An RNA of 207 nucleotides, treated with 2A3 and read out base by base. The 2A3 profile rests on 767 reads. Conditions: 150 mM KOAc, 10 mM MgCl2 and 150 mM bicine (pH 8.5), 24 C. Source: RMDB library RNAMAK, as collected in RNAgym. 2A3 adducts were read by reverse transcription with SuperScript II with manganese.
RNA sequence: GGGAACGACUCGAGUAGAGUCGAAAAGCGACACUGUUCGCAGUGUCGCAAAAGCGUACUACGCAGCAUCGAUCUCCUGGGAAUUCUAUCCCAAAUAGGAUAGUUAUCCCAGGGAGGGAGCUGCGUAUCGCAAAAGCGGUGGGGUUCGCCCCACCGCGCUAGAUUGCAACUUCGGUUGCAAUCUAGCAAAAGAAACAACAACAACAAC
Reactivity to 2A3 in 0.01 (KOAc 150mM, MgCl2 10mM, bicine 150mM(pH8.5), 24C), signal-to-noise 1, nucleotides 027 to 156: g010c020g000a000c000a000c020u000g030u080u120c180g110c120a000g000u000g000u050c010g000c000a010a010a000a010g030c030g070u150a110c060u000a000c000g010c000a010g050c030a300u150c060g070a080u030c080u070c090c000u000g000g020g000a050a130u200u000c000u000a010u030c000c040c010a210a280a160u270a030g010g000a010u000a010g040u080u060a040u150c000c010c000a000g000g060g000a010g000g140g000a080g020c010u070g000c000g010u000a000u080c010g000c020a030a040a030a040g000c000g040g000u000g000g000g000g010u070u170c290g060c050c010c000c000a000c000c000g000c000